[RMDB]
RNA sequence: GGGAACGACUCGAGUAGAGUCGAAAAAAUUUCAUAAAAGGCCAGCAGUGAUGGUGGACAGAGAGACACUUGCUGGUUUAACAACACCGAACACCUAAUCACUGAAGGAGCAAGUUAUCCCCUUGGGUUUCAUUCUCUGCUUUGCAGAGUCUUAGGAAUCAUUUAUCGUAUUCGUACGAUAAAUGAUAAAAGAAACAACAACAACAAC
Reactivity to DMS in 0.01 (KOAc 150mM, MgCl2 10mM, bicine 150mM(pH8.5), 24C), signal-to-noise 2, nucleotides 027 to 156: a050a090u000u000u020c040a190u010a100a100a090a120g000g000c040c010a100g010c000a030g040u010g020a070u010g020g030u010g020g000a300c050a110g010a150g030a150g000a120c020a050c060u000u010g050c000u010g000g000u000u010u000a040a110c120a120a060c050a100c010c020g010a060a260c020a080c030c020u000a050a100u000c020a080c080u000g020a090a020g020g010a120g040c050a030a140g000u000u000a100u000c010c000c000c000u030u040g000g000g000u010u000u000c020a070u000u000c010u000c000u000g020c000u000u010u010g020c010a020g000a040g040u000c040u000u000a120g050g010a130
Reactivity to 2A3 in 0.01 (KOAc 150mM, MgCl2 10mM, bicine 150mM(pH8.5), 24C), signal-to-noise 2, nucleotides 027 to 156: a000a000u150u220u140c080a060u140a080a100a010a020g100g000c010c010a010g000c000a000g060u010g050a050u140g040g030u030g030g000a030c040a020g140a000g020a010g020a060c020a010c030u050u100g020c020u020g020g050u020u020u040a000a000c020a040a000c050a010c030c080g040a060a000c030a060c020c010u070a060a070u060c050a020c050u040g030a060a050g030g010a050g050c020a070a030g070u060u050a050u100c000c000c000c000u020u040g080g010g020u020u080u050c040a040u090u000c000u020c000u010g010c060u060u110u300g000c000a010g000a020g040u000c030u010u190a080g000g040a040

Notes: Structure probing data (DMS and 2A3) for a 207-nucleotide construct. For DMS the reverse transcriptase was MarathonRT. Reactivities are given for positions 27 through 156.